This 207-nucleotide RNA was probed chemically with 2A3. Values cover nucleotides 27 to 156. For 2A3 the reverse transcriptase was SuperScript II with manganese. The data come from the RNA Mapping Database (RMDB), library OK3TST. The 2A3 profile rests on 583 reads.
RNA sequence: GGGAACGACUCGAGUAGAGUCGAAAACAAACUGAUGUAUUGAAUAAAAACCAACAGAUCCUGGCUAAUGCUUUCAAUCAAGCUAUUGGUAACAUUACACAGGCUUUUGGUAAGGUUAAUGAUGCUAUACAUCAAACAUCACAAGGUCUUGCCACUGACCUGGGAUACGGUUCGCCGUAUCCCAGGUAAAAGAAACAACAACAACAAC
Reactivity to 2A3 in 0.01 (KOAc 150mM, MgCl2 10mM, bicine 150mM(pH8.5), 24C), signal-to-noise 1, nucleotides 027 to 156: c030a010a030a000c020u070g000a000u060g060u030a060u010u080g060a100a010u180a270a140a090a010a000c000c020a010a000c000a040g020a060u120c000c010u000g070g000c040u040a010a000u010g030c070u020u030u080c060a060a070u030c050a200a010g060c090u100a020u000u000g000g060u040a010a010c010a080u030u070a010c110a000c000a060g000g000c030u050u080u030u010g030g000u050a090a090g100g030u020u050a060a050u230g110a020u130g030c030u090a010u030a090c000a020u070c020a000a120a010c040a040u100c030a000c030a180a050g010g010u030c030u070u090g060c000c030a030c090u020g050